[RMDB]
RNA sequence: GGGAACGACUCGAGUAGAGUCGAAAAAGAAGUGAAAGCGUACGAUAAAAUGUCUAAAGAAGAGAGAGAUGUGCAUGAUCAGCAGCAGCGUGAGAAGGAGGAGAAGGAACAAGCUGGUGAGUUAUUGCACUUCUUGGGCCCAGUGCUGGUGUGACGCUCUUGGCAAGUCUUUCGAGACUUGCCAAGAAAAAGAAACAACAACAACAAC
Reactivity to 2A3 in 0.01 (KOAc 150mM, MgCl2 10mM, bicine 150mM(pH8.5), 24C), signal-to-noise 1, nucleotides 027 to 156: a000g000a010a040g040u060g020a040a020a000g080c070g100u110a000c020g030a070u200a070a180a030a050u110g020u000c160u160a000a130a000g000a160a000g020a000g010a040g000a000g000a010u050g080u120g060c160a110u040g080a100u110c100a010g040c000a000g080c030a010g060c040g090u060g010a090g000a040a000g080g010a020g030g010a020g020a070a040g040g040a110a040c040a030a040g050c060u090g020g010u000g000a030g030u030u050a040u080u120g020c000a000c000u040u100c000u030u070g090g000g000c000c000c000a000g040u000g070c050u000g000g080u000g040u010g020a000c070g000c040